[RMDB]
RNA sequence: GGGAACGACUCGAGUAGAGUCGAAAAGAUAUGGAACUACCCUCCGAAGAACUACAGAACUCUCGGAAACGAGUUGCUGUAGGGAGGAGGUAGUUCCUAAGUCAAAAGCUUUCCUUCGGGAAAGCAAUCAUACUUGACGGUUCGCCGUCAAGUAUGAAAAAGAAACAACAACAACAAC
Reactivity to 2A3 in 0.01 (KOAc 150mM, MgCl2 10mM, bicine 150mM(pH8.5), 24C), signal-to-noise 2, nucleotides 027 to 126: g010a000u040a040u140g020g010a010a000c010u020a010c200c050c060u050c010c000g060a270a100g000a110a050c010u010a000c000a010g050a040a090c040u010c020u100c210g160g020a050a060a020c030g010a000g040u080u160g260c010u010g000u000a000g020g000g050a000g000g000a010g020g010u000a000g010u000u000c000c000u000a000a020g010u000c000a050a000a100a130g000c010u000u020u000c020c000u010u030c240g050g000g000a000a000a000g000c000a020a010
Reactivity to DMS in 0.01 (KOAc 150mM, MgCl2 10mM, bicine 150mM(pH8.5), 24C), signal-to-noise 2, nucleotides 027 to 126: g000a050u000a300u000g010g000a010a000c000u000a010c110c080c030u010c010c010g000a090a150g020a180a170c010u010a010c000a010g000a080a060c110u000c010u010c060g010g010a070a060a140c070g000a030g020u000u000g000c010u020g020u000a000g020g020g020a040g010g020a020g000g020u000a000g000u000u000c000c000u010a020a090g000u000c030a060a100a120a140g010c000u000u000u000c000c000u000u040c270g000g000g000a010a000a000g000c010a000a000
Chemical mapping of a 177-nucleotide RNA with 2A3 and DMS. Values cover nucleotides 27 to 126. Conditions: 150 mM KOAc, 10 mM MgCl2 and 150 mM bicine (pH 8.5), 24 C.